[RMDB]
Structure probing data (DMS and 2A3) for a 177-nucleotide construct. The RNA was probed in 150 mM KOAc, 10 mM MgCl2 and 150 mM bicine (pH 8.5) at 24 C. It was measured as part of the RMDB library OK1LIB.
RNA sequence: GGGAACGACUCGAGUAGAGUCGAAAAGAAGAUGCGAAGCUGUCUGAGCGUGAUGAAAAUCAUGCGAAUAAAGGGCUUUGGAGGAAUAAAGGCAGCGGAACUCUUAGGCCGAAAAGCAUCGAAGAAAGGGUUAUACAUACUUCGGUAUGUAUAACCCAAAAGAAACAACAACAACAAC
Reactivity to DMS in 0.01 (KOAc 150mM, MgCl2 10mM, bicine 150mM(pH8.5), 24C), signal-to-noise 3, nucleotides 027 to 126: g020a150a160g010a000u010g020c020g020a100a080g000c000u010g000u010c020u000g000a220g010c000g030u020g000a000u000g000a140a120a120a020u000c000a010u000g000c030g000a140a160u020a070a010a100g020g020g000c010u010u000u000g020g000a010g020g030a060a060u030a050a130a080g000g030c000a010g000c000g000g000a040a070c000u000c010u000u010a030g000g020c000c000g000a090a010a080a090g000c000a000u000c000g010a110a130g000a060a080a100
Reactivity to 2A3 in 0.01 (KOAc 150mM, MgCl2 10mM, bicine 150mM(pH8.5), 24C), signal-to-noise 2, nucleotides 027 to 126: g030a080a010g010a000u000g000c000g080a040a030g000c010u000g010u020c000u010g060a010g010c000g050u000g000a020u020g010a000a060a000a020u000c020a010u000g000c000g010a000a010u160a080a130a130g140g000g000c000u030u040u050g010g000a010g000g140a130a090u110a250a070a000g000g060c040a020g000c020g060g030a200a140c000u000c010u040u000a010g000g030c020c040g050a020a180a000a000g000c000a020u010c010g000a020a010g140a020a040a060